Structure probing data (DMS) for a 177-nucleotide construct.

[RMDB]
RNA sequence: GGGAACGACUCGAGUAGAGUCGAAAAGAUAUGGAAACAAGGUCCGACGAACGAGCGAUAAGAUACCACGUCGGAAACGACGUGUGUAUCUUUUGACGCUCCAACUCGGACCUUGUUUCCUAAGUCACAUGAAGGGAUACUUCGGUAUCCCUUCAUGAAAAGAAACAACAACAACAAC
Reactivity to DMS in 0.01 (KOAc 150mM, MgCl2 10mM, bicine 150mM(pH8.5), 24C), signal-to-noise 3, nucleotides 027 to 126: g000a040u000a300u000g000g000a030a030a010c000a000a010g010g010u010c000c000g010a010c060g000a140a170c300g000a020g020c000g040a200u000a010a000g010a030u000a010c010c010a000c000g030u000c000g000g000a070a070a110c010g020a010c000g020u000g000u050g020u000a020u000c000u010u000u010u010g000a240c100g000c000u000c010c020a050a240c300u000c010g010g000a000c000c000u000u000g000u000u020u000c000c000u000a010a050g020u000c070a280

For DMS the reverse transcriptase was MarathonRT. The RNA was probed in 150 mM KOAc, 10 mM MgCl2 and 150 mM bicine (pH 8.5) at 24 C. In probing experiments dimethyl sulfate is read out at A N1 and C N3, which are open when not base-paired. The DMS profile rests on 2,683 reads.